[RMDB]
RNA sequence: GGGAACGACUCGAGUAGAGUCGAAAACCAUCGACUGUCACCAGAUGCUGCAUCACCUGAUCACUGUUGGCUCAACGGUAUCCGGCGGUACAACUGAAUACUUGUAGCUGCCUUUUGAGCGGGUUGGAAAAUCGGAGGUUGUUCGCAACCUCCGAAAGUUCAGAUAUGCGUUCGCGCAUAUCUGAACAAAAGAAACAACAACAACAAC
Reactivity to 2A3 in 0.01 (KOAc 150mM, MgCl2 10mM, bicine 150mM(pH8.5), 24C), signal-to-noise 1, nucleotides 027 to 156: c000c000a040u080c060g190a040c010u050g020u150c020a030c080c030a060g020a140u050g010c040u020g000c020a030u080c090a040c040c050u070g030a060u050c050a000c060u010g020u000u000g140g030c030u000c020a020a190c090g060g050u020a060u150c080c030g020g000c000g000g080u060a060c050a000a010c040u160g160a140a010u050a150c000u000u040g000u050a020g000c030u020g000c000c000u110u080u110u130g010a010g010c000g040g060g000u030u010g080g050a060a100a000a140u020c000g000g000a000g030g000u000u000g000u000u010c030g060c080a000a000c000c000u000c000c000g000a000a000a000